[RMDB]
RNA sequence: GGGAACGACUCGAGUAGAGUCGAAAAGGUGGUUAAGCAUGCUAGGUAUGACCUGUGACCACCGAAACAGGUCAUUUGCCGAGGUGGGAGGUGGGAACGCGAAAGCGAAAGCAUGCUUACCACCGAAGGGUUAGCUAUCCUUCGGGAUAGCUAACCCAAAAGAAACAACAACAACAAC
Reactivity to 2A3 in 0.01 (KOAc 150mM, MgCl2 10mM, bicine 150mM(pH8.5), 24C), signal-to-noise 1, nucleotides 027 to 126: g050g000u040g000g000u270u060a000a000g000c000a000u000g000c000u000a040g000g000u150a000u030g000a000c000c000u000g000u000g000a040c140c000a050c130c030g040a000a000a000c020a000g030g000u000c000a030u090u150u150g000c030c000g020a040g000g140u300g020g000g050a100g060g110u240g030g010g000a000a030c040g000c000g060a060a000a000g000c020g000a040a000a000g000c000a000u000g030c000u000u000a000c000c000a000c000c000g000a000a000